RNA sequence: GGGAACGACUCGAGUAGAGUCGAAAACAGGUUAAUAUUCCUGUACAUAGUAAAUUUGCGGUGACGUUGAGGGCUAAUUUCUGACACUUCGAGAUAUGUUUUGUAGGAUUGUCGUCCUAUUUACGUGCCGUGUGAGCCAUUUCGAUGGCUCACACGGAAAAGAAACAACAACAACAAC
Reactivity to 2A3 in 0.01 (KOAc 150mM, MgCl2 10mM, bicine 150mM(pH8.5), 24C), signal-to-noise 1, nucleotides 027 to 126: c000a000g020g040u160u220a040a010u060a130u190u000c000c000u000g060u090a040c000a000u170a000g140u170a040a090a080u090u110u150g020c000g010g030u100g000a000c000g000u000u150g030a060g000g000g000c000u000a130a020u020u100u050c030u040g000a000c000a000c090u000u000c060g070a010g120a070u090a070u110g160u000u120u060u120g040u020a000g000g050a000u000u130g140u150c090g000u010c000c000u000a020u040u190u100a060c190g030u000g000
Reactivity to DMS in 0.01 (KOAc 150mM, MgCl2 10mM, bicine 150mM(pH8.5), 24C), signal-to-noise 1, nucleotides 027 to 126: c010a030g000g000u020u020a150a120u060a120u000u000c000c000u000g050u000a170c220a110u000a110g000u050a050a200a180u000u040u060g000c070g000g020u040g000a060c000g010u010u030g000a010g000g000g000c070u000a080a120u040u000u000c000u010g030a040c080a010c020u020u020c090g000a210g000a050u000a090u010g000u000u010u000u000g000u000a120g020g000a020u020u040g010u010c280g020u020c000c030u000a140u000u020u000a000c020g000u000g020
Conditions: 150 mM KOAc, 10 mM MgCl2 and 150 mM bicine (pH 8.5), 24 C. The record gives the reactivity of an RNA of 177 nucleotides to 2A3 and DMS. For 2A3, 399 sequencing reads were counted. DMS adducts were read by reverse transcription with MarathonRT. It was measured as part of the RMDB library RFM100. For 2A3 the reverse transcriptase was SuperScript II with manganese.